[RMDB]
RNA sequence: GGGAACGACUCGAGUAGAGUCGAAAAAUGGUAGUUAGUCUACUCGCUAUCCUAGUUACUUUGGAGUAAUCUAAAGUGUGUGUAAACGGGCGAAAGUCAGUAAAAUACUGGGGACAUAGGGUCAACAAGAACUAGUAGACCUUCGGGUCUACUAGAACGAUUACGCUUGAUUCGUCAAGCGUAAUCGAAAAGAAACAACAACAACAAC
Reactivity to DMS in 0.01 (KOAc 150mM, MgCl2 10mM, bicine 150mM(pH8.5), 24C), signal-to-noise 1, nucleotides 027 to 156: a070u020g000g060u000a010g020u010u000a170g010u010c010u000a010c000u000c060g040c050u010a150u000c010c030u010a110g010u000u000a010c010u010u000u000g020g010a050g020u000a170a120u000c010u000a020a010a040g010u000g030u000g000u010g010u010a050a090a100c050g000g070g000c030g020a130a090a130g040u000c020a070g000u000a050a050a030a100u000a090c040u020g000g000g000g020a070c070a100u000a110g030g010g020u010c040a030a140c090a030a090g000a120a170c010u030a000g010u000a000g000a040c000c000u000u010c240g050g020g030u010c010u000a000c010u000a010g000a020a150
Reactivity to 2A3 in 0.01 (KOAc 150mM, MgCl2 10mM, bicine 150mM(pH8.5), 24C), signal-to-noise 2, nucleotides 027 to 156: a000u070g010g000u020a030g020u080u090a030g030u060c010u010a030c000u040c010g010c030u070a090u090c010c010u040a030g050u020u080a020c010u020u010u070g000g030a040g030u090a090a090u000c010u030a020a030a040g010u040g020u010g000u000g020u080a060a140a010c090g010g010g000c040g020a070a020a010g050u040c020a020g020u070a040a060a060a050u110a050c020u030g000g000g010g040a020c020a030u080a030g050g000g010u040c010a030a010c020a110a080g050a100a020c000u000a010g000u000a000g000a010c000c000u020u020c130g050g000g020u000c000u020a000c010u000a000g000a000a000
The data come from the RNA Mapping Database (RMDB), library M2RFPK. Chemical mapping of a 207-nucleotide RNA with DMS and 2A3. For 2A3 the reverse transcriptase was SuperScript II with manganese. The RNA was probed in 150 mM KOAc, 10 mM MgCl2 and 150 mM bicine (pH 8.5) at 24 C. For 2A3, 1,752 sequencing reads were counted.